[RMDB]
RNA sequence: GGGAACGACUCGAGUAGAGUCGAAAAUUUGAUUUGUGUUGUAAAAGAAAUGCCUCAUCCAAUAUUUAAGAGAUAUGUAUUACAAGAGAAACGAAAAUUGGAUUUUUCGGAUAUUGCGAUUGAAUUGACUAUCUGGGAUGUUCGCAUCCCAGAUAGUAAAAGAAACAACAACAACAAC
Reactivity to DMS in 0.01 (KOAc 150mM, MgCl2 10mM, bicine 150mM(pH8.5), 24C), signal-to-noise 1, nucleotides 027 to 126: u000u000u020g030a140u010u030u020g040u010g020u000u010g000u000a110a040a110a140g000a110a070a070u010g000c140c030u000c120a100u000c000c050a060a000u000a030u000u010u000a100a150g010a160g000a110u010a060u000g030u010a060u000u000a130c050a040a160g020a070g020a020a080a060c040g000a000a000a040a040u000u030g030g020a170u000u000u000u000u030c020g000g000a060u000a040u000u000g040c130g010a050u010u020g030a190a090u000u000g000
Chemical mapping of a 177-nucleotide RNA with DMS. Source: RMDB library OK2TST, as collected in RNAgym. Conditions: 150 mM KOAc, 10 mM MgCl2 and 150 mM bicine (pH 8.5), 24 C.